[RMDB]
RNA sequence: GGGAACGACUCGAGUAGAGUCGAAAAGGCUUCCCUGGAGGCGCCCAUGGCCGCCGCGAAGAGUUCGUCUCUGUCAGCUGCGGGUCGCCCGGGGGCCGCGGGAGAGUCCCAGGCCUUGGCCGCAGGGAGAGAAACGGAGCAGGUCCUCGCGCGGUGCGUAUAGUCGUUUCUUCGGAAACGACUAUACAAAAGAAACAACAACAACAAC
Reactivity to 2A3 in 0.01 (KOAc 150mM, MgCl2 10mM, bicine 150mM(pH8.5), 24C), signal-to-noise 1, nucleotides 027 to 156: g030g010c000u010u020c000c020c070u070g160g030a030g020g050c000g000c050c050c000a060u110g170g010c080c040g050c150c060g020c020g030a130a090g060a030g030u070u060c070g130u040c030u010c010u000g260u100c010a060g000c030u000g010c000g030g010g030u120c120g070c040c010c020g080g020g000g010g000c000c010g040c080g030g110g000a200g040a040g120u100c020c000c000a000g010g020c000c000u090u140g040g030c000c010g000c000a030g110g060g030a070g020a010g000a080a220a010c020g000g030a010g020c000a010g130g100u070c000c010u010c020g010c000g020c000g050g000u020g010c010